RNA sequence: GGGAACGACUCGAGUAGAGUCGAAAACGGAGAAUAAUUUUUUAGGACCAAUUACCGUAGUUGCGACUACAACAAUUGUUGUUCAUACCCCCACGAUUUACUUUUUGAAAACUAGUUUUUGGAAUAAGAGAAGGUACAGUUUCGACUGUACCUUCUCAAAAGAAACAACAACAACAAC
Reactivity to DMS in 0.01 (KOAc 150mM, MgCl2 10mM, bicine 150mM(pH8.5), 24C), signal-to-noise 1, nucleotides 027 to 126: c200g000g000a010g000a180a040u000a040a010u000u000u030u020u000u000a000g000g000a190c150c000a070a040u000u000a080c190c140g000u040a010g000u000u010g050c080g020a180c000u000a070c110a020a020c200a100a020u000u000g000u020u000g000u000u000c020a130u000a140c000c100c000c060c020a040c150g000a000u000u020u050a140c050u000u000u020u020u000g080a030a050a030a100c120u010a060g010u020u010u000u010u000g060g050a050a100u000a070a050
Reactivity to 2A3 in 0.01 (KOAc 150mM, MgCl2 10mM, bicine 150mM(pH8.5), 24C), signal-to-noise 2, nucleotides 027 to 126: c020g060g030a190g110a070a060u180a120a120u140u140u140u070u150u090a020g010g010a040c010c000a040a000u060u010a040c040c040g000u030a020g000u030u010g090c140g160a090c060u000a000c000a040a000c000a030a040u030u020g050u030u010g010u020u070c000a000u070a160c030c000c000c000c030a040c090g000a070u000u150u300a160c090u190u170u120u120u180g110a010a040a000a060c020u000a050g050u030u000u000u000u000g090g070a080a030u110a160a040